[RMDB]
RNA sequence: GGGAACGACUCGAGUAGAGUCGAAAAUAUGGGCAGUUCGCUGCCCAUACGAGCGGAGUCCGGCACUAUGAGCCCGCAGCGUUGCUGCGUAGCCGCGGUGCAGAGACCAAGCCUUCGGGCUUGGUAAAACAUCCCUAUAUUUCGAUAUAGGGAUGUUAAAAGAAACAACAACAACAAC
Reactivity to 2A3 in 0.01 (KOAc 150mM, MgCl2 10mM, bicine 150mM(pH8.5), 24C), signal-to-noise 7, nucleotides 027 to 126: u050a010u000g000g000g000c010a000g010u030u090c170g060c140u000g010c000c000c000a000u000a000c000g010a010g020c070g030g040a080g090u010c040c000g050g020c010a000c020u070a070u180g040a030g030c010c020c020g000c000a000g000c200g300u240u230g010c000u010g000c010g020u040a030g010c010c010g010c060g010g000u020g000c020a030g040a010g010a170c000c000a000a010g000c000c010u030u060c180g070g000g000c000u000u010g000g000u000a010a000
Reactivity to DMS in 0.01 (KOAc 150mM, MgCl2 10mM, bicine 150mM(pH8.5), 24C), signal-to-noise 9, nucleotides 027 to 126: u000a000u000g000g000g020c000a010g020u000u010c220g020c000u000g010c010c000c000a000u000a000c040g000a070g010c050g010g010a130g000u000c010c020g000g010c010a020c020u000a110u000g000a240g010c010c160c000g010c000a010g010c010g010u010u010g020c000u000g010c010g010u000a070g010c010c020g010c300g000g010u000g010c010a110g010a160g000a040c000c000a000a010g010c000c000u000u010c190g030g010g010c000u000u000g000g000u000a010a040

Structure probing data (2A3 and DMS) for a 177-nucleotide construct. The reactions ran in a buffer of 150 mM KOAc, 10 mM MgCl2 and 150 mM bicine (pH 8.5), at 24 C. Values are in units of 0.01, from 0 to 300, in steps of 10. The DMS profile rests on 32,307 reads. The 2A3 profile rests on 19,172 reads. For DMS the reverse transcriptase was MarathonRT.